[RMDB]
Chemical mapping of a 177-nucleotide RNA with DMS and 2A3. For DMS the reverse transcriptase was MarathonRT. DMS (dimethyl sulfate) methylates the pairing face of unpaired adenines and cytosines. The reactions ran in a buffer of 150 mM KOAc, 10 mM MgCl2 and 150 mM bicine (pH 8.5), at 24 C. For 2A3 the reverse transcriptase was SuperScript II with manganese. For 2A3, 845 sequencing reads were counted.
RNA sequence: GGGAACGACUCGAGUAGAGUCGAAAAAAGAUAAACAACAGGUUUAGGUGAGGUAGGUAACAGAUAACAUUUAGUGGGUACAUAACAUAAUAUGUGUCAGGCUCUUCACAUAUGUUGUCUUAUGUACAAACAUUAACUCCUUCGGGAGUUAAUGUUUAAAAGAAACAACAACAACAAC
Reactivity to DMS in 0.01 (KOAc 150mM, MgCl2 10mM, bicine 150mM(pH8.5), 24C), signal-to-noise 4, nucleotides 027 to 126: a060a070g010a090u010a050a060a090c040a070a060c060a070g010g020u020u010u010a050g010g010u010g000a060g000g010u000a020g000g010u010a040a070c120a050g000a050u000a050a070c080a050u000u000u010a120g030u010g030g000g010u000a010c020a030u000a020a020c040a020u010a120a030u000a020u010g010u000g000u000c100a070g010g010c070u000c010u000u000c020a020c000a020u000a020u000g000u010u000g000u000c100u000u000a020u000g000u010a030c050
Reactivity to 2A3 in 0.01 (KOAc 150mM, MgCl2 10mM, bicine 150mM(pH8.5), 24C), signal-to-noise 1, nucleotides 027 to 126: a000a020g050a040u150a000a070a040c030a040a000c050a080g050g050u010u090u100a040g000g030u090g090a030g030g050u040a030g010g030u020a030a000c020a020g050a050u100a070a040c000a000u110u090u090a080g020u120g000g120g000u030a030c020a030u050a030a000c000a010u070a130a020u080a130u090g010u010g020u030c030a030g030g090c020u000c080u230u100c020a000c010a010u030a020u000g050u050u000g030u030c010u050u020a010u030g000u030a010c030